[RMDB]
RNA sequence: GGGAACGACUCGAGUAGAGUCGAAAAUUUAAAAGCCAGGACGGUCACCUUUGGGGUGGUGACAAGUGUGAUCACUUGGGUGGUGGCUGUGUUUGCGUCUCUCCCAGGAAUCAUCUUUACCAGAUCUCAACGAUCCGGCUCAGUUCGCUGAGCCGGAGCGCAGUUUGAAGUUCGCUUCAAACUGCGCAAAAGAAACAACAACAACAAC
Reactivity to 2A3 in 0.01 (KOAc 150mM, MgCl2 10mM, bicine 150mM(pH8.5), 24C), signal-to-noise 1, nucleotides 027 to 156: u100u100u050a040a150a070a000g050c010c010a010g050g020a020c060g020g000u010c010a030c000c030u100u160u220g050g030g000g000u020g010g020u030g040a010c020a050a060g080u070g010u010g120a070u120c010a010c080u000u040g070g000g030u080g010g100u090g020g000c050u010g060u000g070u100u100u150g060c000g080u000c020u000c000u000c050c000c010a020g030g050a040a030u040c020a020u000c050u100u150u030a110c030c010a070g010a080u030c060u030c080a050a130c060g060a070u000c000c010g000g000c000u000c000a010g000u030u080c190g000c090u010g010a030g000c000c000g000g000a000